Chemical mapping of a 177-nucleotide RNA with DMS and 2A3. Values are in units of 0.01, from 0 to 300, in steps of 10. Source: RMDB libraries RFM100 and RFMREP, as collected in RNAgym. The reactions ran in a buffer of 150 mM KOAc, 10 mM MgCl2 and 150 mM bicine (pH 8.5), at 24 C. 2A3 adducts were read by reverse transcription with SuperScript II with manganese.
[RMDB]
RNA sequence: GGGAACGACUCGAGUAGAGUCGAAAAAAUGUUCUGUUGGUCAGUGCAGCGUUUGCUUUCGUCUUGUCCAUGCUCUUCAUCUGAGCUGGCUGGGGAAAGCGGAAUGACUGGUAGUACCUGAACUCCCUAGAGUACAUUUAUUCGUAAAUGUACUCUAAAAAGAAACAACAACAACAAC
Reactivity to DMS in 0.01 (KOAc 150mM, MgCl2 10mM, bicine 150mM(pH8.5), 24C), signal-to-noise 9, nucleotides 027 to 126: a060a060u010g010u000u000c020u020g010u010u010g010g010u000c030a110g010u020g020c000a010g010c020g020u000u000u010g000c000u000u000u000c000g000u030c000u010u000g000u040c000c000a020u050g010c000u000c000u000u020c300a120u030c270u000g000a010g000c000u000g000g000c010u000g010g000g000g000a010a010a010g000c000g010g000a010a020u000g000a130c010u000g000g010u010a100g020u030a060c040c010u000g000a020a030c040u000c000c000c020
Reactivity to 2A3 in 0.01 (KOAc 150mM, MgCl2 10mM, bicine 150mM(pH8.5), 24C), signal-to-noise 9, nucleotides 027 to 126: a000a000u200g000u030u010c050u060g230u200u150g030g010u020c040a060g090u060g280c000a000g010c020g010u000u020u020g000c010u020u010u020c090g300u030c140u050u050g080u100c010c000a070u290g000c000u010c010u100u130c070a250u080c110u120g000a000g000c000u000g000g000c000u000g000g000g010g000a000a000a000g000c020g010g020a030a020u050g090a260c000u000g020g010u020a030g020u040a020c000c000u010g000a000a010c010u020c000c000c000